Chemical mapping of a 177-nucleotide RNA with DMS and 2A3.
RNA sequence: GGGAACGACUCGAGUAGAGUCGAAAACCCUUAGCCAUCCGAGUGGACGUUUGUCCUCCUUCGGAUGCCCAGGUCGGACCACGGGGAGGUGGAGAUGCCAUGCCGACCCGAAGAGGAAGAAGAGGACGAUAUUGAACAACUUCGGUUGUUCAAUAUCAAAAGAAACAACAACAACAAC
Reactivity to DMS in 0.01 (KOAc 150mM, MgCl2 10mM, bicine 150mM(pH8.5), 24C), signal-to-noise 3, nucleotides 027 to 126: c010c010c010u000u020a060g010c130c020a010u000c000c010g000a060g010u000g000g000a020c040g020u000u000u020g010u000c000c000u000c090c100u000u010c000g010g000a030u000g000c080c050c030a080g010g020u000c030g000g010a160c030c040a100c040g000g010g000g010a130g000g000u010g010g010a140g000a060u000g010c040c060a070u010g020c010c010g000a170c020c030c030g010a070a050g020a060g000g000a110a070g000a070a050g010a090g000g000a130c160
Reactivity to 2A3 in 0.01 (KOAc 150mM, MgCl2 10mM, bicine 150mM(pH8.5), 24C), signal-to-noise 3, nucleotides 027 to 126: c010c000c000u030u200a060g040c050c010a000u000c010c010g010a020g030u030g000g020a010c050g120u080u240u300g010u040c000c000u060c000c080u090u050c000g000g000a000u010g020c000c000c000a060g020g040u030c040g050g020a060c020c030a050c050g030g030g040g000a060g080g010u050g040g020a100g010a070u210g090c060c020a070u130g020c030c010g020a030c000c000c000g070a120a050g010a040g060g050a010a040g030a060a010g030a040g030g030a020c090
For 2A3 the reverse transcriptase was SuperScript II with manganese. The data come from the RNA Mapping Database (RMDB), library VIROID.